[RMDB]
RNA sequence: GGGAACGACUCGAGUAGAGUCGAAAAGCGAUUCGUAGCAGCGCCGUCGCUCGCGAGCAGCUCGCCAACCUGCCGCAGCGCUUCGCCCGGCCUGACCUGGUGCUGUGGGAGCGCGGCACCGAGUCGUUGGUCUACGUCGUCCAGGCCGAUGGUGCCGCGAGUAAACGUAGUUCGCUACGUUUACUCGAAAAGAAACAACAACAACAAC
Reactivity to DMS in 0.01 (KOAc 150mM, MgCl2 10mM, bicine 150mM(pH8.5), 24C), signal-to-noise 3, nucleotides 027 to 156: g030c030g000a080u000u010c040g010u000a120g050c060a090g000c030g050c020c040g000u010c050g030c020u000c040g010c050g020a130g030c030a100g030c040u000c050g010c080c060a110a110c110c050u000g010c030c020g040c030a070g020c000g000c070u000u000c040g020c020c020c010g020g020c040c110u000g010a060c010c010u000g040g030u000g020c000u010g010u010g020g020g020a100g020c040g030c010g010g000c010a030c010c000g000a060g010u000c010g030u010u000g010g000u000c020u000a070c120g000u000c030g010u000c020c010a120g010g050c020c010g010a100u000g010g020u000g040c000c020g000
Reactivity to 2A3 in 0.01 (KOAc 150mM, MgCl2 10mM, bicine 150mM(pH8.5), 24C), signal-to-noise 9, nucleotides 027 to 156: g060c020g040a060u080u100c050g050u140a050g040c090a050g030c030g010c060c030g140u230c050g010c020u030c070g050c020g030a050g010c020a010g010c020u090c110g110c040c020a070a110c010c020u020g010c010c000g000c010a020g000c010g010c040u100u120c050g040c020c040c010g010g010c000c030u070g030a120c010c020u030g010g000u020g000c000u010g030u110g040g060g040a070g050c030g000c000g010g000c000a000c000c010g010a020g020u010c030g030u040u080g010g010u000c040u060a060c050g090u080c010g020u000c030c030a020g010g010c010c010g060a120u130g040g040u090g030c010c020g010